Record summary: Chemical mapping of a 177-nucleotide RNA with DMS and 2A3. Conditions: 150 mM KOAc, 10 mM MgCl2 and 150 mM bicine (pH 8.5), 24 C. For 2A3 the reverse transcriptase was SuperScript II with manganese.

RNA sequence: GGGAACGACUCGAGUAGAGUCGAAAAUAUCAUAACAGACCCGAGUGCAUUCUGCGUCCGUCAGGCCUGCAGUGGGGUCACAGCAGGGCGACUCGACUUACACUGUGAACUGGCCGGUGUCGUUGCAUCCUACCAUUCCUUUCGAGGAAUGGUAGGAAAAAGAAACAACAACAACAAC
Reactivity to DMS in 0.01 (KOAc 150mM, MgCl2 10mM, bicine 150mM(pH8.5), 24C), signal-to-noise 3, nucleotides 027 to 126: u000a060u010c080a110u020a140a120c080a100g000a140c020c000c020g000a090g030u000g020c030a040u010u000c040u000g010c070g000u000c040c160g010u000c040a050g010g010c090c050u010g020c020a020g050u000g010g000g000g030u010c040a040c150a090g040c060a070g010g020g000c070g000a050c050u000c210g010a050c020u000u000a110c030a060c010u020g020u010g010a060a100c040u010g000g010c000c050g000g020u010g020u000c070g010u000u000g000c050a110
Reactivity to 2A3 in 0.01 (KOAc 150mM, MgCl2 10mM, bicine 150mM(pH8.5), 24C), signal-to-noise 2, nucleotides 027 to 126: u070a010u020c050a010u040a250a040c020a060g060a030c020c010c030g030a040g090u050g020c040a050u050u060c000u070g010c000g010u020c020c010g020u010c010a000g040g040c000c040u060g030c000a010g000u010g020g060g020g020u040c010a000c010a000g060c020a010g040g070g080c020g060a030c030u020c040g010a000c020u020u070a090c040a010c060u020g020u040g110a110a040c020u020g020g010c030c030g020g010u020g040u020c020g010u020u000g020c030a030